[RMDB]
RNA sequence: GGGAACGACUCGAGUAGAGUCGAAAAGUUUCAUCCUUCGGGAUGAAACAAAUAAAGUGACGCUCGCGCGUCACUGGCAUCGAGUAGGUGGAGCCGCCUACAAAAUCGACGGGUUCGCCCGUCGAAAUCUAUUUUACUUCUUCGGAAGUAAAAUAGAAAAAGAAACAACAACAACAAC
Reactivity to DMS in 0.01 (KOAc 150mM, MgCl2 10mM, bicine 150mM(pH8.5), 24C), signal-to-noise 4, nucleotides 027 to 126: g010u000u000u000c000a000u000c000c000u000u010c180g020g020g010a020u000g010a010a000a010c010a030a100a090u010a080a080a010g010u000g000a010c000g030c000u010c300g010c300g000c000g010u000c000a010c000u000g000g010c130a120u000c150g000a120g000u000a000g010g030u000g000g000a160g000c070c050g000c010c010u010a020c020a060a030a090a080u000c010g010a010c000g000g000g010u000u010c200g020c010c000c010g020u000c000g000a000a040a050
Reactivity to 2A3 in 0.01 (KOAc 150mM, MgCl2 10mM, bicine 150mM(pH8.5), 24C), signal-to-noise 2, nucleotides 027 to 126: g000u000u000u000c000a010u010c010c000u020u050c200g110g010g010a000u000g000a000a000a000c010a000a020a000u130a020a120a000g000u000g000a000c000g040c030u120c120g160c090g010c000g060u010c010a000c000u000g000g040c040a170u170c120g060a080g060u000a000g040g030u030g030g170a060g010c060c020g000c010c000u030a010c010a020a090a010a090u030c000g000a000c000g010g060g020u080u060c200g090c020c020c010g000u000c010g000a000a000a000